RNA sequence: GGGAACGACUCGAGUAGAGUCGAAAAGAAAGACCACUUGUAUUUGGGUUUGGAUUUGCCAUUUUUUGGAGUAUUUUACCAAGAAGGAAUAAUAGGUGAGGUUAAGUCUACUUAGCAAUAUUGCUAGAGAUAAGGAACAGUUCGCUGUUCCUUAUCUAAAAGAAACAACAACAACAAC
Reactivity to 2A3 in 0.01 (KOAc 150mM, MgCl2 10mM, bicine 150mM(pH8.5), 24C), signal-to-noise 3, nucleotides 027 to 126: g030a030a090a010g060a030c010c000a010c090u070u110g050u070a170u050u060u070g080g030g000u060u020u080g030g050a080u070u010u050g040c030c020a050u050u090u000u000u090u110g030g000a040g040u080a190u080u190u080u110a090c010c010a010a020g050a010a020g120g020a060a010u050a180a040u060a130g030g030u040g020a040g040g000u070u080a060a030g010u000c010u080a120c070u070u010a000g040c010a060a160u160a160u300u240g000c000u030a020g010
Reactivity to DMS in 0.01 (KOAc 150mM, MgCl2 10mM, bicine 150mM(pH8.5), 24C), signal-to-noise 5, nucleotides 027 to 126: g000a130a130a090g000a090c020c020a050c070u000u000g020u000a080u000u000u010g010g010g010u000u000u000g000g000a130u000u000u000g010c020c020a060u000u000u000u010u010u010g010g020a130g000u010a050u010u010u010u000a100c030c020a020a030g010a060a070g000g000a050a070u010a060a080u000a060g010g020u000g000a070g000g000u000u000a040a120g000u000c050u000a090c120u010u000a020g010c010a030a130u000a130u000u000g020c010u000a040g010